[RMDB]
RNA sequence: GGGAACGACUCGAGUAGAGUCGAAAAGAUAUGGAGAGGUUCAAUGCCGAUAAGCUCCAGUCGGAAACGACUGAGAGCUUUUGACGGCAUGACCUCUCCUAAGUCAAAAGUUAGGUUCGCCUAACAACUCAAAUUAUCUGUUCGCAGAUAAUUUGAGAAAAGAAACAACAACAACAAC
Reactivity to DMS in 0.01 (KOAc 150mM, MgCl2 10mM, bicine 150mM(pH8.5), 24C), signal-to-noise 4, nucleotides 027 to 126: g000a020u000a300u010g000g010a010g010a010g000g000u010u000c080a110a030u000g020c010c000g010a200u010a030a010g010c000u000c000c000a010g010u000c000g010g010a090a090a150c000g000a030c000u000g010a170g000a010g000c000u000u000u000u000g020a220c120g020g010c010a020u010g000a030c000c000u000c000u000c000c000u000a010a060g000u000c040a130a090a110a130g010u000u000a000g000g010u010u020c300g040c010c000u000a000a020c000a140a190
Reactivity to 2A3 in 0.01 (KOAc 150mM, MgCl2 10mM, bicine 150mM(pH8.5), 24C), signal-to-noise 3, nucleotides 027 to 126: g000a020u040a010u080g020g010a010g000a000g000g030u190u300c180a300a100u080g000c000c130g090a070u110a190a000g000c000u000c000c000a010g000u000c000g000g030a050a020a020c010g040a010c010u020g050a070g000a010g300c000u010u000u000u010g020a000c010g000g010c000a010u000g000a000c000c000u000c010u000c000c010u000a000a010g000u000c000a000a030a030a100g010u010u010a020g000g080u050u070c280g070c070c000u010a010a010c020a030a040

Background
The record gives the reactivity of an RNA of 177 nucleotides to DMS and 2A3. 2A3 adducts were read by reverse transcription with SuperScript II with manganese. Source: RMDB library TTRDES, as collected in RNAgym. As a SHAPE reagent, 2A3 marks flexible, mostly unpaired nucleotides at the ribose 2'-OH. For DMS, 5,236 sequencing reads were counted.